[RMDB]
RNA sequence: GGGAACGACUCGAGUAGAGUCGAAAACCUCACAGUGCCAUCGAGAGCGUGUUAUGUAAAUUCAGUAACCCUCCUAUGGCGUAAAUGAUGCGCCACUAGCGAAAGAGAAAAGCCAAAGGGCGUAGUCUCUUUCUGUUAUAUUCGUAUAACAGAAAGAAAAAGAAACAACAACAACAAC
Reactivity to DMS in 0.01 (KOAc 150mM, MgCl2 10mM, bicine 150mM(pH8.5), 24C), signal-to-noise 9, nucleotides 027 to 126: c020c000u010c180a100c220a140g020u020g010c000c010a010u000c060g010a120g010a010g010c180g030u030g020u000u010a010u000g000u020a070a100a140u030u010c120a130g010u000a010a020c000c000c000u000c000c010u000a010u000g000g010c010g000u010a040a080a100u020g010a080u000g000c000g000c010c000a010c030u000a080g000c010g000a080a090a140g010a160g010a070a100a110a180g000c000c020a030a040a030g000g000g010c010g020u000a030g010u010c050
Reactivity to 2A3 in 0.01 (KOAc 150mM, MgCl2 10mM, bicine 150mM(pH8.5), 24C), signal-to-noise 9, nucleotides 027 to 126: c010c000u070c010a160c020a040g160u110g070c010c000a010u020c050g030a030g000a010g300c120g050u170g010u110u010a040u020g110u140a070a230a260u250u140c030a020g020u000a000a000c000c000c000u000c000c000u000a000u000g000g000c000g000u020a010a020a040u190g030a020u030g000c000g000c000c000a010c010u000a000g000c010g090a070a180a030g160a030g040a020a110a030a000g000c020c010a170a300a010g020g000g000c010g000u020a080g080u000c020